[RMDB]
RNA sequence: GGGAACGACUCGAGUAGAGUCGAAAAACAUCCAGAUACACCCAAAGUAUCAGGACGAGAAUGAGGGUCCUUUGGGAAAGGAGAAGUUAAGCAACAUCUAGCAAAUGUUAUGCAUAAAGUCAGUGCCCCCUCUUGCUGGAUUCGUCCAGCAAGAGGGAAAAGAAACAACAACAACAAC
Reactivity to DMS in 0.01 (KOAc 150mM, MgCl2 10mM, bicine 150mM(pH8.5), 24C), signal-to-noise 1, nucleotides 027 to 126: a130c090a120u120c030c000a110g000a090u000a010c230a110c000c060c010a000a120a010g000u000a000u000c010a060g020g000a160c120g040a180g000a080a070u070g000a130g000g000g000u000c010c040u010u010u000g000g000g000a060a080a130g030g000a010g040a000a010g010u000u000a030a070g030c040a070a010c040a010u000c070u000a200g000c110a120a300a000u000g000u000u020a050u000g030c040a080u070a000a130a000g000u000c040a090g050u000g000c000c150
Reactivity to 2A3 in 0.01 (KOAc 150mM, MgCl2 10mM, bicine 150mM(pH8.5), 24C), signal-to-noise 3, nucleotides 027 to 126: a000c030a050u060c010c010a040g050a090u150a010c050a080c000c040c020a000a010a020g010u020a030u080c000a000g160g110a010c080g090a020g140a200a250u300g020a160g030g060g000u010c000c000u030u010u020g050g020g000a080a000a020g130g000a070g020a170a030g120u130u130a030a120g020c010a000a050c000a070u050c010u090a010g000c060a030a020a010u010g000u030u000a030u170g010c010a020u120a170a090a030g080u110c070a000g020u070g050c000c000
Background: Structure probing data (DMS and 2A3) for a 177-nucleotide construct. Source: RMDB library OK1LIB, as collected in RNAgym. The RNA was probed in 150 mM KOAc, 10 mM MgCl2 and 150 mM bicine (pH 8.5) at 24 C. For 2A3, 1,186 sequencing reads were counted. The DMS profile rests on 1,185 reads.